[RMDB]
RNA sequence: GGGAACGACUCGAGUAGAGUCGAAAAUUUGAUUGUUAAUAACUUCGACCGCAUGUAUUGGGUAAAAUUAUUUGCUUUAGAUUAUCUUGAUAAAUUUAACUUAGGUUAUGAUUAUUAUAUCGUUCCUGAUACUCGUCAAGAUCAUGAAAUGGAUGCGCAAGCUGGUAUGAUUCGUCAUACCAGCUUGAAAAGAAACAACAACAACAAC
Reactivity to DMS in 0.01 (KOAc 150mM, MgCl2 10mM, bicine 150mM(pH8.5), 24C), signal-to-noise 2, nucleotides 027 to 156: u020u010u010g010a210u000u000g040u000u030a100a190u010a120a120c080u000u000c030g050a150c110c000g020c110a070u000g010u010a070u000u020g010g000g000u000a070a040a070a130u010u030a090u000u000u000g000c040u000u000u000a120g000a150u000u000a050u000c010u000u000g000a040u000a050a030a060u010u000u000a040a080c040u000u010a070g040g040u000u000a050u010g010a140u000u000a160u000u020a100u000a040u010c030g000u010u010c010c000u000g020a140u010a040c070u000c070g040u010c010a020a030g000a040u000c070a100u010g010a050a030a070u000g020g000a100u010g000c030g000
Reactivity to 2A3 in 0.01 (KOAc 150mM, MgCl2 10mM, bicine 150mM(pH8.5), 24C), signal-to-noise 3, nucleotides 027 to 156: u130u040u070g110a110u030u020g060u060u070a100a100u120a100a120c060u060u070c050g040a060c070c020g070c000a010u070g070u300a020u030u100g030g000g030u030a060a000a100a180u210u100a140u130u080u050g010c000u040u050u050a100g010a110u040u050a010u020c000u010u000g000a020u040a120a230a170u170u140u120a070a090c030u020u050a000g010g010u060u090a020u080g010a000u000u100a060u140u110a110u140a010u210c010g020u000u030c000c000u010g000a010u020a100c020u070c140g000u000c010a000a000g000a000u030c010a000u080g040a020a030a010u040g030g020a010u060g020c150g010